[RMDB]
RNA sequence: GGGAACGACUCGAGUAGAGUCGAAAAAUCAAUGAAGUUUGUAGAAUACGCAUGUAUUUCAUGCAAGAUGAUGAAUUAGGGCAGGCCAUGCUACGCGGAUUGUACAGACAAAUCAUUUGGACGCUCAUACACAGUUUUGUUUCGACAAAACUGUGUAAAAAGAAACAACAACAACAAC
Reactivity to 2A3 in 0.01 (KOAc 150mM, MgCl2 10mM, bicine 150mM(pH8.5), 24C), signal-to-noise 2, nucleotides 027 to 126: a000u040c020a000a010u040g020a030a080g020u000u050u000g010u030a040g050a140a020u050a020c020g000c010a000u070g020u100a090u060u130u090c030a020u050g030c020a010a110g130a070u230g000a040u030g040a020a100u090u040a160g120g000g020c040a010g000g010c020c030a060u040g000c020u040a040c050g010c030g020g020a020u010u050g060u050a010c010a000g000a030c000a040a150a050u010c010a000u040u040u020g040g000a000c030g000c080u030c000a020
Reactivity to DMS in 0.01 (KOAc 150mM, MgCl2 10mM, bicine 150mM(pH8.5), 24C), signal-to-noise 3, nucleotides 027 to 126: a100u010c050a020a020u000g000a040a110g010u010u000u010g020u010a010g020a040a010u000a030c010g020c060a100u010g020u000a040u010u010u010c020a040u000g020c070a080a100g020a060u000g000a050u010g000a090a060u000u010a090g010g010g020c010a030g000g010c070c070a040u010g000c020u000a050c160g020c030g000g010a010u000u000g000u000a030c020a010g000a020c020a030a110a100u000c010a020u000u000u010g020g010a110c160g020c040u000c030a190
The data come from the RNA Mapping Database (RMDB), library OK2TRN. This 177-nucleotide RNA was probed chemically with 2A3 and DMS. 2A3 adducts were read by reverse transcription with SuperScript II with manganese. Reactivities are given for positions 27 through 126. For 2A3, 1,876 sequencing reads were counted. The reactions ran in a buffer of 150 mM KOAc, 10 mM MgCl2 and 150 mM bicine (pH 8.5), at 24 C.